[RMDB]
RNA sequence: GGGAACGACUCGAGUAGAGUCGAAAACGCGGCGUAUUCGUCUUUGACAACACCGCUACCGCUGCGAAUAAGAUCACCGCCGCCCAUGUUCUCAAGCCCUGCUACAUGGAAGACGACCACACCGUCACGGCGCUCGCCACGGGCGCGUCCGUGGCUGGAGAAGCUCUGUAUUCGUACAGAGCUUCUCAAAAGAAACAACAACAACAAC
Reactivity to 2A3 in 0.01 (KOAc 150mM, MgCl2 10mM, bicine 150mM(pH8.5), 24C), signal-to-noise 2, nucleotides 027 to 156: c100g000c000g020g000c000g040u110a110u090u090c040g060u040c080u100u100u220g080a080c070a140a050c030a090c010c040g010c060u110a130c040c080g110c060u040g000c010g010a060a020u120a120a060g090a080u050c040a000c040c120g020c000c010g030c000c000c000a050u080g040u120u000c040u020c050a080a070g020c000c000c030u070g030c010u020a010c020a030u060g020g010a080a000g040a020c040g040a040c020c040a050c040a020c090c000g020u040c010a010c010g010g000c040g000c050u070c060g020c070c050a200c080g030g010g020c000g010c030g070u050c000c020g030u010g010g000c030u030g010
The record gives the reactivity of an RNA of 207 nucleotides to 2A3. The RNA was probed in 150 mM KOAc, 10 mM MgCl2 and 150 mM bicine (pH 8.5) at 24 C. The 2A3 profile rests on 1,052 reads.